An RNA of 207 nucleotides, treated with 2A3 and DMS and read out base by base. For 2A3, 2,959 sequencing reads were counted. It was measured as part of the RMDB library OK3TST. For DMS, 2,697 sequencing reads were counted. Values cover nucleotides 27 to 156. The reactions ran in a buffer of 150 mM KOAc, 10 mM MgCl2 and 150 mM bicine (pH 8.5), at 24 C.
[RMDB]
RNA sequence: GGGAACGACUCGAGUAGAGUCGAAAAAUCAAAACGUAGAUGGUAUGGAAAAAAUCAGACUACAAACAAAGGAACGUGUUGCAAAACAUAGAGAAAGAUUAAAAUUGUCAGAUAGUAACGUUACAUGUAACGUUACAGUAACGCAGUGUAACGCAACGCUUGUAGACACAUUCGUGUGUCUACAAGCAAAAGAAACAACAACAACAAC
Reactivity to 2A3 in 0.01 (KOAc 150mM, MgCl2 10mM, bicine 150mM(pH8.5), 24C), signal-to-noise 4, nucleotides 027 to 156: a020u120c040a020a010a020a030c050g020u020a020g000a060u060g020g020u080a050u110g100g110a070a100a000a040a010a050u070c050a040g110a190c010u020a030c050a020a110a010c040a060a100a020g130g000a060a020c070g020u020g000u030u010g000c020a010a050a060a000c020a040u090a030g090a000g020a060a110a000g050a040u080u200a040a070a100a090u080u060g030u070c040a020g050a120u070a050g030u020a000a020c000g000u000u000a020c030a080u190g070u070a050a010c010g000u000u030a040c000a000g020u040a020a010c060g000c060a030g030u010g010u060a040a010c030g000c040a040a000c040
Reactivity to DMS in 0.01 (KOAc 150mM, MgCl2 10mM, bicine 150mM(pH8.5), 24C), signal-to-noise 2, nucleotides 027 to 156: a090u030c040a060a030a130a070c090g040u000a020g020a130u000g020g010u000a040u010g020g030a010a020a030a060a060a090u000c010a090g020a150c000u000a090c020a080a110a090c090a050a040a070g030g010a050a100c070g030u010g020u000u000g000c100a030a070a090a140c020a130u000a070g010a180g040a110a060a030g000a140u000u000a020a030a070a060u020u000g010u010c050a070g000a120u010a090g000u010a020a000c000g030u000u020a040c030a080u000g030u000a010a010c040g010u000u000a040c100a170g010u000a030a130c050g020c010a060g000u000g010u000a060a050c060g000c040a040a040c070